[RMDB]
This 170-nucleotide RNA was probed chemically with 2A3 and DMS. It was measured as part of the RMDB library 15KLIB. Reactivities are given for positions 27 through 129.
RNA sequence: GGGAACGACUCGAGUAGAGUCGAAAAUUUGAAACACUUUCAGCAUGUCGUGCGUAUUUGGAUUCACGCACGACACAGCAGUUAACAAUCGAAGUCUUAGUGACUGUCGAUGGUGUAAAUUUUAGAACAGGAUGGCCGUUCGCGGCCAUCAAAAGAAACAACAACAACAAC
Reactivity to 2A3 in 0.01 (KOAc 150mM, MgCl2 10mM, bicine 150mM(pH8.5), 24C), signal-to-noise 3, nucleotides 027 to 129: u030u000u100g060a090a040a040c080a050c000u020u070u050c040a000g020c000a000u030g000u000c000g000u000g010c000g000u020a120u010u150u220g270g040a110u090u080c040a010c010g000c000a000c000g010a000c020a010c050a000g000c000a000g000u020u020a060a010c000a010a010u000c010g010a020a020g030u020c030u020u040a130g020u030g150a000c000u070g120u060c020g010a000u000g000g000u030g010u000a070a110a080u070u080u050u030a110g090a080a040c060a010g110
Reactivity to DMS in 0.01 (KOAc 150mM, MgCl2 10mM, bicine 150mM(pH8.5), 24C), signal-to-noise 4, nucleotides 027 to 129: u030u020u000g000a250a170a020c060a050c050u040u010u050c060a080g060c050a300u010g000u000c020g040u010g020c000g090u050a030u110u010u030g040g070a200u040u030c260a050c040g030c010a000c040g000a030c000a020c080a050g030c020a070g010u040u010a010a210c300a160a030u020c000g000a000a000g000u020c000u040u040a120g040u080g040a000c010u000g080u050c010g020a020u000g030g050u120g000u000a000a060a100u000u000u000u000a060g050a140a090c080a170g040

For 2A3, 6,553 sequencing reads were counted.